Structure probing data (2A3 and DMS) for a 177-nucleotide construct. Reactivities are given for positions 27 through 126. In probing experiments dimethyl sulfate is read out at A N1 and C N3, which are open when not base-paired.

[RMDB]
RNA sequence: GGGAACGACUCGAGUAGAGUCGAAAAGAAAGAGGGGGGAAAUCGGAUCCUGGGCUGUGUCCGCCGGCGCCCUGGGCUCCUAGGCCUGCGCUGUUGGAAUCGCGCUCCUGGCCGUGCAGCCCCCUAAUCUAUCACGACAAUUCGUUGUCGUGAUAGAAAAAGAAACAACAACAACAAC
Reactivity to 2A3 in 0.01 (KOAc 150mM, MgCl2 10mM, bicine 150mM(pH8.5), 24C), signal-to-noise 4, nucleotides 027 to 126: g140a020a090a010g170a050g000g000g000g000g000g010a060a080a080u070c030g000g050a090u150c020c000u020g000g020g000c060u130g030u010g030u070c010c000g000c020c030g010g010c000g030c020c040c000u010g040g000g000c020u110c040c070u090a100g110g000c010c020u040g010c020g000c010u020g040u080u040g030g020a050a080u190c060g010c000g000c050u090c020c030u020g010g000c010c000g000u010g010c020a110g010c010c000c000c000c000u000a010a000
Reactivity to DMS in 0.01 (KOAc 150mM, MgCl2 10mM, bicine 150mM(pH8.5), 24C), signal-to-noise 3, nucleotides 027 to 126: g000a050a080a130g010a150g020g000g010g000g000g010a040a090a120u010c040g000g010a050u010c000c000u000g010g000g030c030u040g050u010g010u010c010c040g020c130c020g010g020c010g000c050c300c110u030g000g000g020c010u020c140c090u000a120g010g010c020c010u010g010c000g000c000u000g010u010u010g000g000a040a070u030c080g030c080g000c020u000c020c060u020g010g000c030c000g000u000g000c260a160g010c000c010c000c010c020u010a000a050